RNA sequence: GGGAACGACUCGAGUAGAGUCGAAAAAGGCUGAGGAAUGUCAAGGUCCUCUUUAUCUUUGACGGCAUGUCUCCGCCCGAAAAGUCUAGGGAAAAGAGCAACAGGAGGUGCAGGAAGCAGGCCCUGACCAUGAACCAAGUUUCGACUUGGUUCAUGGAAAAGAAACAACAACAACAAC
Reactivity to 2A3 in 0.01 (KOAc 150mM, MgCl2 10mM, bicine 150mM(pH8.5), 24C), signal-to-noise 1, nucleotides 027 to 126: a000g030g000c030u020g010a010g010g110a140a050u080g070u140c040a090a020g100g040u030c030c050u060c000u060u120u030a090u080c020u050u050u030g020a030c000g010g040c020a030u110g130u000c010u010c040c040g020c030c020c010g060a070a070a010a010g050u030c080u110a050g000g030g030a040a100a050a000g060a050g020c010a000a040c000a030g040g020a030g020g000u050g000c020a010g040g070a030a020g030c030a030g050g000c000c000c000u010g040a040
Reactivity to DMS in 0.01 (KOAc 150mM, MgCl2 10mM, bicine 150mM(pH8.5), 24C), signal-to-noise 2, nucleotides 027 to 126: a040g000g010c050u000g010a060g000g000a040a030u010g010u000c090a070a080g000g020u000c020c060u000c040u000u000u000a040u000c020u000u000u000g000a240c280g000g000c040a020u020g010u010c020u010c060c140g010c010c000c020g000a070a050a070a100g000u000c090u000a080g020g000g000a020a070a070a100g010a060g010c060a030a040c080a090g000g020a070g000g000u000g000c050a060g010g000a080a110g000c110a080g010g000c040c000c020u000g010a210